[RMDB]
RNA sequence: GGGAACGACUCGAGUAGAGUCGAAAAGUGAGUGGACACCCGCUUUAUUCACUGGGGACGACAACUCUGGGGAGAAAAGGGAGGAUCGGAUGGGAAGAGUAUAUCCUACGGGAAUCCGCGAUCCCCUCCUUUAAUUAUAGUUCGCUAUAAUUAAAGGAAAAGAAACAACAACAACAAC
Reactivity to 2A3 in 0.01 (KOAc 150mM, MgCl2 10mM, bicine 150mM(pH8.5), 24C), signal-to-noise 3, nucleotides 027 to 126: g030u020g020a010g010u030g020g020a030c010a070c040c020c010g000c050u090u100u080a090u060u070c030a020c050u020g000g000g010g020a020c020g000a010c010a060a040c020u010c040u080g000g010g020g000a050g040a020a130a030a040g080g010g010a040g020g000a030u060c020g000g050a060u110g070g000g020a050a020g050a030g150u030a030u030a010u080c000c000u010a010c030g010g010g020a020a040u020c010c010g040c010g090a050u020c010c020c000c000u030
Reactivity to DMS in 0.01 (KOAc 150mM, MgCl2 10mM, bicine 150mM(pH8.5), 24C), signal-to-noise 3, nucleotides 027 to 126: g020u010g010a040g030u010g010g020a090c100a160c080c080c110g010c090u000u000u000a090u010u000c000a030c020u000g010g010g000g010a080c040g020a050c090a060a090c120u010c080u000g000g000g000g000a110g000a060a060a060a130g000g000g010a030g010g010a180u010c040g020g000a100u000g000g000g000a010a060g010a120g010u010a070u000a060u000c030c010u000a120c060g010g020g010a210a130u000c030c010g000c070g010a100u000c010c000c000c080u000